[RMDB]
RNA sequence: GGGAACGACUCGAGUAGAGUCGAAAACGAAUGCUCGUAAAUGCUAUGUCUAGUGGACGAAUAAGAUAGACAUAAAUUACGAGCAAUGGUAUGUAUGUAACAUUCGUCCACUAUACAUGCAUACUAAGGUAGAGCGAGAUUUCGAUCUUGCUCUACCAAAAGAAACAACAACAACAAC
Reactivity to DMS in 0.01 (KOAc 150mM, MgCl2 10mM, bicine 150mM(pH8.5), 24C), signal-to-noise 5, nucleotides 027 to 126: c030g010a130a110u020g000c000u000c000g010u000a000a050a090u020g010c220u020a030u000g010u000c010u000a020g000u000g010g010a010c020g000a160a160u030a100a110g020a110u040a040g000a010c000a020u000a010a100a100u010u000a010c000g020a010g000c000a010a010u040g020g010u000a010u000g010u000a010u000g000u000a040a110c270a100u020u000c000g000u000c000c010a010c030u000a070u010a010c000a000u000g000c000a010u000a010c010u010a050a090
Reactivity to 2A3 in 0.01 (KOAc 150mM, MgCl2 10mM, bicine 150mM(pH8.5), 24C), signal-to-noise 4, nucleotides 027 to 126: c030g030a120a040u060g000c000u000c000g000u010a020a000a010u100g050c060u060a010u030g010u000c000u000a000g000u000g000g000a000c000g000a010a050u200a070a050g120a070u140a020g010a010c000a000u020a000a130a000u040u010a000c000g000a000g000c000a000a000u010g000g000u000a000u000g010u000a000u010g000u010a020a000c000a050u040u050c000g000u000c000c000a000c000u000a000u000a000c000a000u000g000c000a000u000a010c010u020a030a030
Structure probing data (DMS and 2A3) for a 177-nucleotide construct.
As a SHAPE reagent, 2A3 marks flexible, mostly unpaired nucleotides at the ribose 2'-OH.
For DMS, 13,525 sequencing reads were counted.
2A3 adducts were read by reverse transcription with SuperScript II with manganese.
The 2A3 profile rests on 23,183 reads.